Chemical mapping of a 177-nucleotide RNA with DMS and 2A3. Values cover nucleotides 27 to 126. The reactions ran in a buffer of 150 mM KOAc, 10 mM MgCl2 and 150 mM bicine (pH 8.5), at 24 C. 2A3 adducts were read by reverse transcription with SuperScript II with manganese. For DMS, 1,316 sequencing reads were counted. High 2A3 reactivity points to a flexible backbone, as in loops and unpaired stretches. DMS adducts were read by reverse transcription with MarathonRT.

RNA sequence: GGGAACGACUCGAGUAGAGUCGAAAAUUACCACUGCCAAAAACCUGAGAAUAUGCCAGGUGUGGUGGCUCACGCCUACAGUGUCAGCUACUUGGGAAGCCAGAGUGGGAGGAAUGAUUGAGCCCAGCGUUCAGGAUGAGUUCGCUCAUCCUGAACGAAAAGAAACAACAACAACAAC
Reactivity to DMS in 0.01 (KOAc 150mM, MgCl2 10mM, bicine 150mM(pH8.5), 24C), signal-to-noise 2, nucleotides 027 to 126: u010u010a090c030c020a100c060u010g010c000c080a050a130a070a150a030c030c000u000g000a120g050a130a150u000a050u020g000c060c010a030g010g030u000g020u010g030g020u000g000g000c030u000c030a050c120g020c050c030u000a040c060a090g020u000g000u000c130a090g010c060u020a050c040u020u000g000g000g040a140a090g000c050c080a130g000a050g040u020g000g000g000a050g000g010a100a060u030g000a140u000u000g010a110g010c020c010c050a170g010
Reactivity to 2A3 in 0.01 (KOAc 150mM, MgCl2 10mM, bicine 150mM(pH8.5), 24C), signal-to-noise 1, nucleotides 027 to 126: u060u000a030c040c020a000c060u050g080c020c020a060a020a110a050a090c020c010u080g030a110g070a300a060u160a080u270g110c030c000a000g000g010u020g030u000g050g030u010g000g040c050u070c010a040c020g080c060c000u110a100c060a020g070u020g090u160c010a050g040c000u030a050c010u020u060g060g000g000a130a020g050c030c010a040g000a020g080u100g040g020g050a040g080g080a070a100u130g030a160u090u130g020a020g090c000c010c000a020g040